[RMDB]
RNA sequence: GGGAACGACUCGAGUAGAGUCGAAAACUCUGUGGCAUGGGAGCUGUGAUAGGAAAGUUCAAGUAGUACCCUGUGUUGCCCCUUUCUAGGGCAGGGGUGCUGGGCCACAGACUGAGCACAGCCCACACUCGAUUAUAGGGUUCGCCCUAUAAUCGAGAAAAGAAACAACAACAACAAC
Reactivity to 2A3 in 0.01 (KOAc 150mM, MgCl2 10mM, bicine 150mM(pH8.5), 24C), signal-to-noise 4, nucleotides 027 to 126: c010u000c020u010g020u000g020g000c060a100u080g230g000g070a050g000c000u010g030u140g160a160u160a160g150g040a190a100a040g010u030u030c060a050a030g020u030a010g010u010a200c010c010c000u030g030u030g140u220u140g000c030c000c010c000u090u270u110c160u210a070g000g010g000c010a010g000g000g000g020u010g010c000u000g000g070g000c010c000a000c000a000g020a000c030u050g060a050g040c080a030c040a100g020c000c010c000a030c000a000
Reactivity to DMS in 0.01 (KOAc 150mM, MgCl2 10mM, bicine 150mM(pH8.5), 24C), signal-to-noise 5, nucleotides 027 to 126: c190u000c010u010g020u000g000g010c020a160u010g010g020g010a050g020c000u000g010u000g000a290u010a160g010g010a090a100a070g010u000u010c020a150a140g020u010a020g030u000a030c010c000c000u000g020u010g010u010u000g000c020c000c000c140u000u000u010c230u010a110g000g000g050c020a200g000g000g000g030u000g010c000u000g000g000g020c010c010a020c020a010g000a080c090u000g010a080g020c150a050c180a110g000c000c000c010a110c220a150